[RMDB]
RNA sequence: GGGAACGACUCGAGUAGAGUCGAAAAAGCGUAGCGGUACGCCGCUACGCAAGGCGCGUUUGAACUGUAUUGUACGCCUUGCAUAAAGCAAAAGUACUAAAAAAACGUGCCGUUACGACGGCACGAAAAAACAUCCAUUGGUUCGCCAAUGGAUGAACUAACGUGUAGCCUUCGGGCUACACGUUAGAAAAGAAACAACAACAACAAC
Reactivity to 2A3 in 0.01 (KOAc 150mM, MgCl2 10mM, bicine 150mM(pH8.5), 24C), signal-to-noise 1, nucleotides 027 to 156: a000g020c000g000u000a000g030c000g010g000u040a010c220g050c050c000g030c000u000a000c010g000c000a000a000g000g000c030g000c030g030u050u090u190g180a230a150c100u060g070u240a080u140u130g040u050a030c010g010c030c000u000u040g010c030a100u150a260a050a090g000c030a020a020a020a020g040u060a030c050u130a030a060a140a070a000a020a020c010g000u000g000c040c000g030u000u060a080c190g030a010c000g000g000c000a000c010g050a020a000a000a000a000a000c000a000u000c000c000a000u000u010g000g030u020u060c120g040c130c000a000a000u000g000g020a000u000g000a000a000